The record gives the reactivity of an RNA of 207 nucleotides to 2A3 and DMS. For 2A3 the reverse transcriptase was SuperScript II with manganese. The data come from the RNA Mapping Database (RMDB), library OK3TST. Conditions: 150 mM KOAc, 10 mM MgCl2 and 150 mM bicine (pH 8.5), 24 C. 2A3 is a SHAPE reagent: it acylates the 2'-hydroxyl of flexible nucleotides of all four kinds.

[RMDB]
RNA sequence: GGGAACGACUCGAGUAGAGUCGAAAAGCCACCGAGCCGUUUGUGAGGAAUCCAUCCCCAUGACCCAAACACCUGCCACUUAGGUCCCACCUCCAACACUGGGGAUCACAUUUCAACUUGAGAUUUGGAGUGGACAGAUAUCCAAACAAUAUACCCAGCUCGGAUCGUAUUUCGAUACGAUCCGAGCAAAAGAAACAACAACAACAAC
Reactivity to 2A3 in 0.01 (KOAc 150mM, MgCl2 10mM, bicine 150mM(pH8.5), 24C), signal-to-noise 4, nucleotides 027 to 156: g020c010c000a000c000c030g010a020g020c000c010g080u000u060u040g050u030g030a040g010g020a020a020u010c010c020a090u050c000c010c000c000a040u070g040a070c010c000c060a030a110a030c080a030c020c040u030g050c060c040a090c090u050u120a040g020g030u020c010c000c020a040c010c030u040c020c010a060a060c050a050c110u040g000g000g000g010a000u030c010a020c010a020u020u090u030c030a050a030c050u160u220g110a110g050a300u070u020u020g010g000a010g000u010g000g020a010c030a040g030a020u060a100u070c000c000a020a040a020c010a030a010u080a010u050a150c010c000c020a000
Reactivity to DMS in 0.01 (KOAc 150mM, MgCl2 10mM, bicine 150mM(pH8.5), 24C), signal-to-noise 2, nucleotides 027 to 156: g030c010c000a030c020c010g000a040g070c010c000g000u010u000u010g040u010g010a300g030g010a110a100u000c080c050a070u000c010c000c030c060a070u000g020a100c030c030c020a070a050a110c060a050c050c020u000g000c050c040a100c170u000u010a070g000g000u010c000c000c040a090c050c020u000c040c000a040a080c090a130c100u010g010g010g000g000a060u000c070a060c010a120u000u000u000c040a080a060c060u000u000g010a180g020a120u010u000u000g010g060a070g000u000g000g000a110c090a070g020a080u000a210u030c020c010a050a170a100c030a050a100u000a110u000a070c040c020c020a120